The record gives the reactivity of an RNA of 207 nucleotides to 2A3 and DMS.
The 2A3 profile rests on 767 reads.
Values are in units of 0.01, from 0 to 300, in steps of 10.
The DMS profile rests on 2,055 reads.
Source: RMDB library OK3TST, as collected in RNAgym.
DMS adducts were read by reverse transcription with MarathonRT.
RNA sequence: GGGAACGACUCGAGUAGAGUCGAAAAGGACAGAAAGCGUCAAACGCCAGGUAGUGAAGGAUGCUUUUUAUAUUCAUCAGCAUAAAGGAACUACCAGUGCCGUGCGGCGGGUGGUGGAACCGUUCGGAUUCCUGAUCCGCAUUAUUGAGUGGUGGCAUCUACCUCCCGAAUUCGUUCGGGAGGUAGAAAAAGAAACAACAACAACAAC
Reactivity to 2A3 in 0.01 (KOAc 150mM, MgCl2 10mM, bicine 150mM(pH8.5), 24C), signal-to-noise 2, nucleotides 027 to 156: g050g030a000c040a070g060a050a130a030g040c040g060u110c040a060a110a050c020g000c030c010a010g000g020u030a010g000u040g070a070a000g050g040a020u020g000c030u000u120u100u140u100a260u070a070u100u210c060a060u000c010a020g020c000a010u020a060a120a010g090g060a080a030c000u000a010c000c030a030g040u020g010c030c030g000u010g020c010g000g020c000g020g010g000u050g000g080u050g040g030a010a010c010c000g010u120u150c110g020g000a080u010u060c000c020u050g000a050u020c020c000g070c040a070u060u140a060u080u170g030a020g010u000g060g010u010g000g050c020a000
Reactivity to DMS in 0.01 (KOAc 150mM, MgCl2 10mM, bicine 150mM(pH8.5), 24C), signal-to-noise 1, nucleotides 027 to 156: g020g000a150c100a090g000a020a050a050g000c070g060u000c030a070a130a180c070g000c000c000a130g000g010u010a030g020u010g020a130a210g010g030a030u000g010c010u010u000u000u000u020a060u020a170u070u000c120a110u000c040a010g000c070a100u000a030a070a130g030g000a180a100c010u000a030c020c030a090g000u000g020c040c050g030u000g010c060g060g000c010g000g030g030u010g050g010u010g060g000a040a030c000c010g010u030u000c100g070g000a090u000u010c040c000u010g000a070u000c030c000g000c010a090u000u000a080u020u000g010a150g000u000g000g000u000g010g000c030a130